[RMDB]
This 177-nucleotide RNA was probed chemically with DMS. Source: RMDB library TTRDES, as collected in RNAgym. Conditions: 150 mM KOAc, 10 mM MgCl2 and 150 mM bicine (pH 8.5), 24 C.
RNA sequence: GGGAACGACUCGAGUAGAGUCGAAAAGAUAUGGACGACGGUAGGACGAUAAGCUGCACUCGGAAACGAGUGUCAGCUUUUGACGUCCAAACGUCGUCCUAAGUCAAAACAGUGGUUCGCCACUGAACCACAGUGAUUGCUUCGGCAAUCACUGUGGAAAAGAAACAACAACAACAAC
Reactivity to DMS in 0.01 (KOAc 150mM, MgCl2 10mM, bicine 150mM(pH8.5), 24C), signal-to-noise 2, nucleotides 027 to 126: g000a080u000a300u020g010g000a050c020g000a000c010g010g020u000a300g010g000a010c010g020a080u020a060a020g060c000u000g000c010a000c000u040c010g000g000a120a140a270c020g010a040g000u010g000u000c000a000g020c000u000u000u020u010g000a300c030g000u010c020c000a010a120a190c010g000u000c000g000u000c000c000u010a000a040g040u000c060a080a080a140a180c050a030g020u030g000g010u000u000c190g010c010c020a010c010u020g060a080a220